[RMDB]
RNA sequence: GGGAACGACUCGAGUAGAGUCGAAAAGACGCCUACGUUCACGGCAGGGCGUACAUCACGAUCAGCAAGCCAGACCCUCAGAUCGACCUGGGCUGGGAUCCGAACGUACCGAUCAUCAGAGUUGAACCGCCCACGCGGAUGUACGCGGAGAUCGAUCGACACACUUCUUUUUCGAAAGAAGUGUGUCAAAAGAAACAACAACAACAAC
Reactivity to 2A3 in 0.01 (KOAc 150mM, MgCl2 10mM, bicine 150mM(pH8.5), 24C), signal-to-noise 3, nucleotides 027 to 156: g070a000c030g000c010c010u000a020c000g030u020u040c030a050c100g010g080c100a170g010g070g000c020g010u020a030c020a030u030c020a020c080g040a060u060c050a020g090c050a100a030g070c000c010a060g030a300c020c010c010u110c070a090g010a150u120c020g040a060c020c040u030g000g000g000c020u010g010g010g000a030u050c050c000g040a090a050c030g020u060a050c030c050g030a030u020c010a020u070c030a050g060a040g180u080u110g080a100a040c020c010g020c000c020c000a020c030g000c000g000g000a030u030g020u020a010c010g010c020g010g010a050g000a080u090c060g030a020u090c090
Reactivity to DMS in 0.01 (KOAc 150mM, MgCl2 10mM, bicine 150mM(pH8.5), 24C), signal-to-noise 1, nucleotides 027 to 156: g050a040c030g000c020c000u030a030c060g060u000u000c040a170c100g030g010c000a130g010g000g040c000g000u000a090c010a100u000c070a210c050g050a070u000c030a050g000c050a070a100g010c090c030a140g010a130c020c040c020u000c070a090g000a040u000c010g000a110c110c020u010g010g030g000c020u000g000g000g050a020u000c010c040g080a110a030c010g020u000a010c030c020g040a060u000c040a030u000c100a120g020a090g010u000u000g000a070a170c100c010g030c000c000c030a030c060g070c000g020g010a020u000g070u000a000c060g030c000g000g010a080g010a100u000c000g010a150u000c000